[RMDB]
RNA sequence: GGGAACGACUCGAGUAGAGUCGAAAAUUCUCAAGCCUGCAACCGACGACUGAACAGACGUGUGAACAGUUUGAGUGUGGUAGCGCUGUGUGAGUUGGCGGUGGAACCCCCUCGUGGUGACACGAGCGUCGAAUAAUUCAUUCGUGAAUUAUUCGACAAAAGAAACAACAACAACAAC
Reactivity to DMS in 0.01 (KOAc 150mM, MgCl2 10mM, bicine 150mM(pH8.5), 24C), signal-to-noise 7, nucleotides 027 to 126: u010u000c010u010c010a110a090g010c080c040u010g010c080a120a030c010c020g020a170c180g000a030c020u000g010a120a120c020a040g000a120c140g020u010g010u010g010a090a110c020a020g000u010u010u010g010a170g020u010g020u000g000g020u010a200g000c070g000c010u000g000u000g020u020g000a060g020u000u000g000g010c130g000g000u020g000g020a090a120c030c000c000c020c000u000c000g030u000g000g000u050g000a210c010a000c000g000a010g010c170
Reactivity to 2A3 in 0.01 (KOAc 150mM, MgCl2 10mM, bicine 150mM(pH8.5), 24C), signal-to-noise 9, nucleotides 027 to 126: u060u000c010u010c010a030a020g050c020c040u070g030c030a040a030c010c000g030a030c000g020a020c030u060g050a050a010c010a010g260a190c050g100u100g070u110g090a070a020c010a060g040u080u180u170g200a180g060u150g010u030g040g080u080a020g000c010g000c060u010g030u010g020u020g100a060g010u010u020g040g000c030g010g030u050g020g030a050a060c000c000c000c010c000u000c010g000u010g000g050u090g030a020c000a000c010g010a020g000c040
Chemical mapping of a 177-nucleotide RNA with DMS and 2A3.
It was measured as part of the RMDB libraries RFM100 and RFMREP.